Overview: The data come from the RNA Mapping Database (RMDB), library OK1LIB. The record gives the reactivity of an RNA of 177 nucleotides to DMS and 2A3. Values cover nucleotides 27 to 126. Conditions: 150 mM KOAc, 10 mM MgCl2 and 150 mM bicine (pH 8.5), 24 C.
[RMDB]
RNA sequence: GGGAACGACUCGAGUAGAGUCGAAAAGAACGGCUGCCGACGAGAUGGACGCGACGAGAGGACUUCGGAGGGCACGUACACUGGAGGCCCGCUCAGACGGCAAUGUUUUGUCAAGACAAAGACAGGGGACUACGCCUAAGUUCGCUUAGGCGUAGUCAAAAGAAACAACAACAACAAC
Reactivity to DMS in 0.01 (KOAc 150mM, MgCl2 10mM, bicine 150mM(pH8.5), 24C), signal-to-noise 3, nucleotides 027 to 126: g000a080a090c050g000g050c010u000g020c000c010g000a150c080g010a040g000a120u020g050g000a100c040g040c030g000a070c050g000a110g000a150g000g000a070c080u000u000c050g000g000a090g020g000g000c020a090c090g000u020a060c140a060c080u050g000g020a100g000g010c050c000c000g020c060u010c040a150g000a150c060g000g000c060a050a080u010g000u000u000u020u040g000u010c070a030a110g000a080c170a050a130a090g000a020c050a080g000g000g000
Reactivity to 2A3 in 0.01 (KOAc 150mM, MgCl2 10mM, bicine 150mM(pH8.5), 24C), signal-to-noise 4, nucleotides 027 to 126: g070a050a000c040g010g000c050u070g020c010c010g020a040c000g000a030g030a120u150g070g030a020c060g040c020g060a060c020g010a010g010a020g080g070a050c050u040u040c040g050g020a070g060g060g000c040a020c080g040u080a020c070a040c050u050g030g020a050g020g020c080c040c000g020c020u050c000a040g030a080c010g000g000c040a070a050u110g020u060u100u040u030g030u030c040a030a010g090a120c060a060a130a010g020a030c040a040g030g020g090